[RMDB]
RNA sequence: GGGAACGACUCGAGUAGAGUCGAAAACAUCAAGACCAUGUGUCUCUAACUGUGCCACUCUGUGGUUCAGGAAACCUGGUUGAAAAACUUUCACCAUGGUUCAUGGAUGGCGAAAAUGCCUAUGAAGAUACCCGUUACUUCGGUAACGGGAAAAGAAACAACAACAACAAC
Reactivity to 2A3 in 0.01 (KOAc 150mM, MgCl2 10mM, bicine 150mM(pH8.5), 24C), signal-to-noise 6, nucleotides 027 to 129: c050a090u140c080a070a020g080a110c020c000a010u030g030u000g050u000c000u000c010u030a060a040c000u010g020u010g040c000c000a030c010u280c080u130g020u000g000g000u010u010c000a000g010g000a020a020a000c010c000u010g030g020u030u140g060a000a030a010a020a040c070u030u030u020c020a010c020c000a030u220g020g000u040u020c000a000u000g020g020a050u010g000g000c030g070a110a100a030a080u190g030c000c010u050a100u160g080a030a030g060a060u090a060
Reactivity to DMS in 0.01 (KOAc 150mM, MgCl2 10mM, bicine 150mM(pH8.5), 24C), signal-to-noise 5, nucleotides 027 to 129: c020a070u050c160a120a000g040a040c050c040a050u030g000u030g020u010c000u010c050u040a110a160c020u030g000u000g020c060c010a000c030u040c160u080g040u020g030g020u030u010c000a000g000g070a030a010a030c030c030u010g000g030u000u000g070a030a050a040a090a140c250u010u020u010c040a000c060c010a020u040g030g040u080u010c000a030u030g040g030a260u000g020g000c000g090a030a050a100a100u030g020c000c030u060a050u070g040a080a060g020a110u000a100

Structure probing data (2A3 and DMS) for a 170-nucleotide construct. The 2A3 profile rests on 14,629 reads. The data come from the RNA Mapping Database (RMDB), library 15KLIB. DMS adducts were read by reverse transcription with MarathonRT. 2A3 adducts were read by reverse transcription with SuperScript II with manganese. Conditions: 150 mM KOAc, 10 mM MgCl2 and 150 mM bicine (pH 8.5), 24 C.